[RMDB]
RNA sequence: GGGAACGACUCGAGUAGAGUCGAAAAGAUUUGAGUCCUGUUUGAUCAAUUAUUGCAGUUGAUAAACUAAUUAAUAUUACAACCGGCAAUGCCCAUACGAGCGAAUAUGUUCCAAGUGAUAGCACACCAGUAAAUGGUUGUUCGCAACCAUUUACUGAAAAGAAACAACAACAACAAC
Reactivity to 2A3 in 0.01 (KOAc 150mM, MgCl2 10mM, bicine 150mM(pH8.5), 24C), signal-to-noise 3, nucleotides 027 to 126: g060a040u100u100u180g030a010g040u050c010c020u070g070u060u070u070g070a040u040c020a050a060u120u050a060u100u220g030c050a010g010u010u020g050a110u080a160a080a020c050u030a060a120u230u130a110a110u160a060u220u160a090c040a060a030c030c010g040g000c010a060a000u060g010c030c000c000a030u050a100c050g010a020g020c030g020a040a030u110a070u190g030u050u000c010c000a020a040g030u030g070a070u070a070g080c020a030c020a020c080
Reactivity to DMS in 0.01 (KOAc 150mM, MgCl2 10mM, bicine 150mM(pH8.5), 24C), signal-to-noise 4, nucleotides 027 to 126: g010a100u010u010u000g020a150g020u000c020c030u000g020u010u000u000g000a060u010c030a030a040u000u010a080u010u000g010c120a120g010u000u000g010a080u000a050a030a080c050u000a050a080u000u000a080a090u010a080u010u000a100c060a040a060c070c060g020g000c030a030a030u000g020c030c020c040a070u000a050c140g010a060g010c070g000a080a080u010a070u000g010u000u000c030c030a050a090g010u000g000a140u000a080g010c100a060c080a070c170